[RMDB]
RNA sequence: GGGAACGACUCGAGUAGAGUCGAAAAGGGACAGUGUCUUGUCUCCUACAGGAAGACAAUUAUUGACCAACAUGAGAAAGAGAUUCACUAUCUGCAAGAUAUCUUCAUGGCCAUGGAGCAGAACUAUAUAGAUUCUGAGUAUGAAAGCAAGCUGGAAGCAUUUUAAAUGAUUCGUCAUUUAAAAUGCAAAAGAAACAACAACAACAAC
Reactivity to 2A3 in 0.01 (KOAc 150mM, MgCl2 10mM, bicine 150mM(pH8.5), 24C), signal-to-noise 5, nucleotides 027 to 156: g040g010g010a030c030a020g020u020g040u080c050u090u020g010u020c020u030c010c000u110a120c060a050g010g060a060a030g020a020c020a030a030u170u070a070u120u150g060a070c040c010a070a100c040a110u120g020a030g070a070a090a020g060a000g020a020u080u090c020a010c070u080a070u080c020u070g050c040a060a040g020a080u050a050u090c020u090u030c010a050u050g020g000c020c020a040u060g020g010a020g000c010a010g000a030a000c030u020a020u060a040u060a300g040a070u030u030c010u010g000a010g050u130a050u130g070a060a030a000g030c040a030a030g000c010u030g020g020a070a020
Reactivity to DMS in 0.01 (KOAc 150mM, MgCl2 10mM, bicine 150mM(pH8.5), 24C), signal-to-noise 3, nucleotides 027 to 156: g020g020g030a100c020a050g020u000g020u000c100u010u000g000u010c000u000c000c000u010a100c130a130g040g000a050a060g000a060c010a060a160u000u010a090u000u000g010a220c040c030a080a090c060a080u000g000a120g000a100a060a130g010a120g030a150u010u010c050a080c050u000a070u000c050u000g010c060a100a080g010a090u010a050u000c030u020u010c040a100u010g000g000c050c020a070u010g010g020a090g030c050a020g000a070a040c040u010a110u020a150u010a110g010a140u000u000c030u000g040a110g010u000a110u000g010a050a070a130g020c020a040a060g010c020u000g000g010a110a220